[RMDB]
RNA sequence: GGGAACGACUCGAGUAGAGUCGAAAAUGACAUGCUGGAACUGAGGGUCGCUUCCUUUGUUUUCUGGGAGGUGUCGUUCAAGUAGUCGUCCUGGAUCCUGGUAAUAAGAAAGGGAAGUGAGAUGAUGCCUCUAAGGGACAUUCGUGUCCCUUAGAGGAAAAGAAACAACAACAACAAC
Reactivity to DMS in 0.01 (KOAc 150mM, MgCl2 10mM, bicine 150mM(pH8.5), 24C), signal-to-noise 2, nucleotides 027 to 126: u000g000a060c030a060u020g010c040u010g010g020a070a030c080u000g010a080g000g000g010u000c080g010c040u000u000c010c000u000u010u010g010u010u020u000u000c060u020g000g020g020a040g000g010u010g000u000c050g000u000u000c040a090a110g010u010a110g020u000c030g000u000c000c010u010g000g010a100u000c030c010u010g020g010u000a070a060u020a060a110g010a050a090a090g010g000g000a050a060g020u000g010a100g010a060u000g020a110u020g000

Background
Structure probing data (DMS) for a 177-nucleotide construct. The RNA was probed in 150 mM KOAc, 10 mM MgCl2 and 150 mM bicine (pH 8.5) at 24 C. For DMS, 1,945 sequencing reads were counted.